[RMDB]
An RNA of 177 nucleotides, treated with 2A3 and DMS and read out base by base. DMS (dimethyl sulfate) methylates the pairing face of unpaired adenines and cytosines. The reactions ran in a buffer of 150 mM KOAc, 10 mM MgCl2 and 150 mM bicine (pH 8.5), at 24 C.
RNA sequence: GGGAACGACUCGAGUAGAGUCGAAAAUAGCUGACGUUCGCGUCAGCUAAAAGCACCAAUACCUCCUGGCGGUGCGGCGCCGGCCCCGCCGGGAAGGCCGCCAACUCGAUGGGUUCGCCCAUCGAAACAUGUGACUCGUUUUCGAACGAGUCACAUGAAAAGAAACAACAACAACAAC
Reactivity to 2A3 in 0.01 (KOAc 150mM, MgCl2 10mM, bicine 150mM(pH8.5), 24C), signal-to-noise 1, nucleotides 027 to 126: u020a000g000c010u000g010a000c000g020u050u040c270g000c020g100u010c040a000g020c000u000a000a000a000a000g000c020a090c040c040a020a080u170a230c010c000u020c000c020u010g000g000c000g000g000u080g060c070g020g040c080g060c080c020g090g000c020c000c020c020g000c020c000g010g010g010a010a010g010g000c020c030g080c000c020a040a080c030u020c020g000a010u010g000g020g000u040u050c180g060c040c000c000a000u010c000g000a020a000a000
Reactivity to DMS in 0.01 (KOAc 150mM, MgCl2 10mM, bicine 150mM(pH8.5), 24C), signal-to-noise 1, nucleotides 027 to 126: u000a000g050c010u000g000a000c000g000u010u000c220g050c020g000u000c050a010g020c020u010a010a010a050a120g000c200a230c050c010a060a110u020a200c020c020u010c020c040u040g010g000c010g020g030u000g000c060g020g020c060g000c040c070g040g000c010c040c040c030g000c020c010g010g000g000a020a040g000g010c170c070g030c000c110a040a100c200u000c020g010a000u000g020g010g010u010u010c170g010c000c000c000a000u000c000g010a020a060a150